[RMDB]
RNA sequence: GGGAACGACUCGAGUAGAGUCGAAAAGUUAUGAAGGGGAUCACUAAUACUCCGAAUAGCGUCAGCCGAAUACAGACGGUUGGGGUUAUAAGCUCGGUGAAGUCGUGCGAAGCACACCCUAACGCUUAACUUAAAGUGGAUUCGUCCACUUUAAGUUAAAAGAAACAACAACAACAAC
Reactivity to 2A3 in 0.01 (KOAc 150mM, MgCl2 10mM, bicine 150mM(pH8.5), 24C), signal-to-noise 9, nucleotides 027 to 126: g040u060u070a080u230g110a110a090g010g020g000g040a050u120c040a020c040u030a030a060u060a080c080u020c030c010g010a010a010u030a000g170c290g300u000c000a000g000c000c000g020a060a020u140a170c090a050g130a060c010g010g000u010u000g000g000g010g000u000u020a060u010a130a060g050c030u010c020g000g000u030g060a050a010g030u100c070g000u010g010c060g120a090a030g010c010a010c000a020c030c010c000u020a070a000c060g020c080u020u010
Reactivity to DMS in 0.01 (KOAc 150mM, MgCl2 10mM, bicine 150mM(pH8.5), 24C), signal-to-noise 8, nucleotides 027 to 126: g010u000u000a060u010g010a140a110g000g010g010g010a120u030c220a040c040u010a040a140u030a180c080u020c010c010g000a070a070u010a010g000c000g000u000c010a030g010c000c000g000a140a090u040a110c300a130g010a110c020g000g020u000u000g020g000g010g010u000u000a020u010a130a110g020c170u010c030g000g010u010g000a070a030g000u010c180g000u000g000c040g000a110a110g000c040a020c050a160c000c000c000u010a050a120c090g010c110u000u000

This 177-nucleotide RNA was probed chemically with 2A3 and DMS. The RNA was probed in 150 mM KOAc, 10 mM MgCl2 and 150 mM bicine (pH 8.5) at 24 C.